The record gives the reactivity of an RNA of 177 nucleotides to 2A3 and DMS.
[RMDB]
RNA sequence: GGGAACGACUCGAGUAGAGUCGAAAAACAGAAUGGCAACGACCUUGUUUCGCCAACUCGCCAUACGCAUGGCGCAUUGAGUCAUUGAGCCAACGUUGAUCCGCAGGGCGAGUGAGCGCGCACUGCACAGCGAUUAAUACUUCGGUAUUAAUCGCUGAAAAGAAACAACAACAACAAC
Reactivity to 2A3 in 0.01 (KOAc 150mM, MgCl2 10mM, bicine 150mM(pH8.5), 24C), signal-to-noise 5, nucleotides 027 to 126: a000c060a040g180a160a150u090g030g000c030a060a030c080g050a040c010c000u050u060g070u060u140u060c030g000c010c010a030a070c040u060c050g000c030c030a100u110a180c100g050c090a050u060g000g000c010g010c030a040u030u120g050a060g060u040c040a060u030u150g080a020g010c000c010a020a010c050g030u040u060g050a080u040c030c020g000c030a020g000g030g000c010g000a020g030u060g050a070g020c090g000c010g000c020a020c020u030g010c050a030
Reactivity to DMS in 0.01 (KOAc 150mM, MgCl2 10mM, bicine 150mM(pH8.5), 24C), signal-to-noise 7, nucleotides 027 to 126: a070c090a090g010a100a090u000g010g010c030a060a090c110g000a100c090c060u000u000g000u000u000u000c050g010c040c050a060a060c110u000c040g010c000c030a060u000a100c180g020c140a090u000g010g010c010g010c110a040u000u010g010a120g010u010c030a110u000u010g000a120g010c010c010a040a100c070g000u000u010g010a110u000c070c050g010c030a030g000g000g010c000g010a020g010u000g000a120g010c110g020c110g000c040a040c030u000g020c050a300
For DMS, 9,145 sequencing reads were counted. Source: RMDB library OK2TST, as collected in RNAgym. The 2A3 profile rests on 13,062 reads. The RNA was probed in 150 mM KOAc, 10 mM MgCl2 and 150 mM bicine (pH 8.5) at 24 C.